[RMDB]
Structure probing data (DMS) for a 177-nucleotide construct. The DMS profile rests on 713 reads.
RNA sequence: GGGAACGACUCGAGUAGAGUCGAAAAAGAUUGAUACAUUUGCUUUACCAUUGAUCAAGUUGGACGUGUACCGACCACCUGAAGGAUUGGAGCAAAAGGCGAUAUCCAUAAUGACAGGUUGUCUACCGACUCUAGAACGCUUCGGCGUUCUAGAGUCAAAAGAAACAACAACAACAAC
Reactivity to DMS in 0.01 (KOAc 150mM, MgCl2 10mM, bicine 150mM(pH8.5), 24C), signal-to-noise 1, nucleotides 027 to 126: a070g000a040u000u000g010a170u000a060c100a020u000u000u000g000c040u000u010u000a160c070c010a030u000u010g030a130u000c030a060a060g010u010u000g030g000a070c110g010u000g010u000a130c150c050g000a050c030c020a060c000c000u020g040a040a040g000g000a120u000u000g010g020a060g020c000a010a010a040a080g030g000c000g010a160u000a040u000c000c030a070u020a120a060u010g000a100c090a130g000g010u000u030g000u010c030u000a150c240c050
Reactivities are given for positions 27 through 126. Reactivities are rounded to 0.1 and cut off at 0 and 3. Source: RMDB library OK2TRN, as collected in RNAgym. The RNA was probed in 150 mM KOAc, 10 mM MgCl2 and 150 mM bicine (pH 8.5) at 24 C.